Structure probing data (DMS) for a 177-nucleotide construct. The reactions ran in a buffer of 150 mM KOAc, 10 mM MgCl2 and 150 mM bicine (pH 8.5), at 24 C. The data come from the RNA Mapping Database (RMDB), library OK2TST.

[RMDB]
RNA sequence: GGGAACGACUCGAGUAGAGUCGAAAAGAAAUUCAUUACAUUGGAGUUUAGCCACCUUGUCCACUAGUCGUAUGCGUAAUAUGGGUUGGAACAUCUAUACUCCACCGAAAAUGUUUAGCAAGCGACAGCCAUGAGGUGGUUUCGACCACCUCAUGGCAAAAGAAACAACAACAACAAC
Reactivity to DMS in 0.01 (KOAc 150mM, MgCl2 10mM, bicine 150mM(pH8.5), 24C), signal-to-noise 1, nucleotides 027 to 126: g000a070a070a090u000u000c000a140u020u010a080c070a050u000u000g010g000a060g000u000u000u000a130g000c030c040a150c040c070u000u010g010u010c060c040a130c140u000a060g020u020c030g010u000a120u000g050c100g060u030a080a070u000a010u010g030g020g040u000u000g010g000a080a040c060a090u030c120u040a060u000a090c080u000c000c000a000c120c010g000a130a040a000a000u020g010u000u000u000a240g000c080a030a300g020c020g000a000c060a110